[RMDB]
RNA sequence: GGGAACGACUCGAGUAGAGUCGAAAAACCAUCAGGGGACAGUUCACUUAAGAAAAUAAGUCAACCAGCUGAUGGGGCCUCUCAAGAGAUCAGCUCAGACGACCAGCGGUUUAUUGACUUAAUGCGCCGUAGCAUUUUGAUUCGUCAAAAUGCUACGAAAAGAAACAACAACAACAAC
Reactivity to DMS in 0.01 (KOAc 150mM, MgCl2 10mM, bicine 150mM(pH8.5), 24C), signal-to-noise 3, nucleotides 027 to 126: a110c020c020a040u010c090a080g010g010g030g040a100c090a090g020u000u010c130a060c120u000u000a040a070g010a120a110a120a130u010a020a030g020u000c070a070a050c090c030a190g000c010u000g020a050u000g010g010g000g010c070c020u010c120u030c090a090a050g010a100g020a090u000c100a080g000c020u000c030a110g000a090c130g000a130c160c060a020g010c030g000g000u000u000u000a050u010u000g000a100c050u000u000a020a070u000g020c110g010c110
Reactivity to 2A3 in 0.01 (KOAc 150mM, MgCl2 10mM, bicine 150mM(pH8.5), 24C), signal-to-noise 2, nucleotides 027 to 126: a000c010c000a000u050c000a000g050g010g000g050a010c010a040g040u060u040c050a080c060u090u100a080a050g060a100a240a080a070u170a020a030g030u000c010a000a000c010c010a050g030c000u010g000a030u060g010g010g040g030c000c020u000c020u030c050a010a110g030a010g010a130u060c030a020g060c010u040c060a060g040a160c120g050a060c070c000a000g030c000g000g000u020u060u020a110u050u050g010a010c020u060u050a090a020u110g100c080g000c070
Source: RMDB library OK2TST, as collected in RNAgym. An RNA of 177 nucleotides, treated with DMS and 2A3 and read out base by base. For 2A3, 1,431 sequencing reads were counted. The RNA was probed in 150 mM KOAc, 10 mM MgCl2 and 150 mM bicine (pH 8.5) at 24 C.